The record gives the reactivity of an RNA of 177 nucleotides to 2A3 and DMS. The RNA was probed in 150 mM KOAc, 10 mM MgCl2 and 150 mM bicine (pH 8.5) at 24 C. For 2A3, 2,866 sequencing reads were counted.
RNA sequence: GGGAACGACUCGAGUAGAGUCGAAAAACGAGUCCGUACGCGGACUCGAAGGGCCCCAGAAGACCAAGGGGCCCAAACCUACCACUCAUUAGAUGCAUGGAAAUCACUAGGUGAUACGUCACCUAGAGCGCAGUACCUAAUUCGUUAGGUACUGCGCAAAAGAAACAACAACAACAAC
Reactivity to 2A3 in 0.01 (KOAc 150mM, MgCl2 10mM, bicine 150mM(pH8.5), 24C), signal-to-noise 4, nucleotides 027 to 126: a000c000g010a000g000u000c010c000g010u030a020c270g010c010g080g000a000c000u000c000g000a010a000g000g000g000c000c010c000c010a130g070a300a040g100a120c070c080a160a070g010g000g000g050c000c000c010a000a000a000c000c010u040a050c020c010a030c050u080c010a070u120u180a120g050a080u140g050c100a050u050g070g060a080a130a030u110c020a050c040u000a000g000g010u010g010a020u010a030c230g090u020c000a000c000c000u000a000g010a010
Reactivity to DMS in 0.01 (KOAc 150mM, MgCl2 10mM, bicine 150mM(pH8.5), 24C), signal-to-noise 1, nucleotides 027 to 126: a090c000g000a000g000u000c060c020g080u030a090c300g020c000g050g000a000c000u000c000g000a000a080g040g000g000c060c060c000c000a060g000a210a030g080a200c110c170a170a110g000g070g000g000c000c000c000a000a000a020c050c000u000a160c110c100a200c140u000c100a020u000u000a020g010a050u000g150c150a000u020g000g030a000a000a110u000c090a300c000u010a000g030g000u000g000a020u000a130c300g000u000c000a010c000c000u000a000g000a070